RNA sequence: GGGAACGACUCGAGUAGAGUCGAAAAGGCGCAUUUGUUAAGUGUUCAAAUGGGCCCGACUCUGCCACAUACAUUAUGCAGGAGCUGGCAAAGGCUUAGAGACAAAGAAGUCUCUCUUGAGUGUUUCCAACAAGGGGAGGUUCGCCUCCCCUUGUUGAAAAGAAACAACAACAACAAC
Reactivity to DMS in 0.01 (KOAc 150mM, MgCl2 10mM, bicine 150mM(pH8.5), 24C), signal-to-noise 2, nucleotides 027 to 126: g000g060c000g000c000a000u000u010u000g000u070u030a100a140g040u030g000u010u020c000a000a020a000u010g000g000g020c000c010c020g020a030c010u010c000u000g020c030c050a110c160a080u050a080c160a110u000u010a050u020g030c080a150g000g000a050g000c040u030g000g030c120a170a130a120g000g010c030u000u000a010g010a000g010a000c010a060a110a100g030a110a070g000u000c000u010c000u000c030u000u030g010a030g000u000g010u000u000u000c000
Reactivity to 2A3 in 0.01 (KOAc 150mM, MgCl2 10mM, bicine 150mM(pH8.5), 24C), signal-to-noise 4, nucleotides 027 to 126: g010g000c070g010c080a010u010u010u010g070u070u130a300a190g100u140g180u250u120c000a010a000a000u020g010g150g020c000c000c000g010a000c000u000c000u000g020c000c010a050c000a010u190a030c020a050u120u260a100u270g060c020a040g030g180a100g050c050u020g080g020c100a110a040a030g040g000c010u030u090a010g010a000g000a020c000a030a240a080g160a070a030g080u020c000u000c000u000c010u040u020g000a000g000u000g000u000u010u000c000

Chemical mapping of a 177-nucleotide RNA with DMS and 2A3. Conditions: 150 mM KOAc, 10 mM MgCl2 and 150 mM bicine (pH 8.5), 24 C. It was measured as part of the RMDB libraries RFM100 and RFMREP. Values cover nucleotides 27 to 126.